[RMDB]
RNA sequence: GGGAACGACUCGAGUAGAGUCGAAAAGAUGACCGGACGCAGCAAGGCUUUGCUGGGCACACAGGCCCAAUAGGAGCAUUCACCCCCGACGAGUUCGCGCUCCACCACCGCGACACGCAGGCCCCCCAGAGAGCUUAUGAUUCGUCAUAAGCUCUCUAAAAGAAACAACAACAACAAC
Reactivity to DMS in 0.01 (KOAc 150mM, MgCl2 10mM, bicine 150mM(pH8.5), 24C), signal-to-noise 3, nucleotides 027 to 126: g020a110u000g010a120c030c040g000g010a090c050g030c040a040g020c050a040a070g000g020c060u000u000u010g010c070u000g000g000g010c010a070c160a130c240a140g020g000c000c010c020a040a080u010a090g010g010a060g030c030a100u020u010c120a240c060c010c020c040c010g000a090c080g010a110g010u010u000c020g020c100g000c010u010c030c030a130c060c050a030c080c010g030c060g010a050c120a040c070g000c060a070g010g000c010c010c020c000c030c050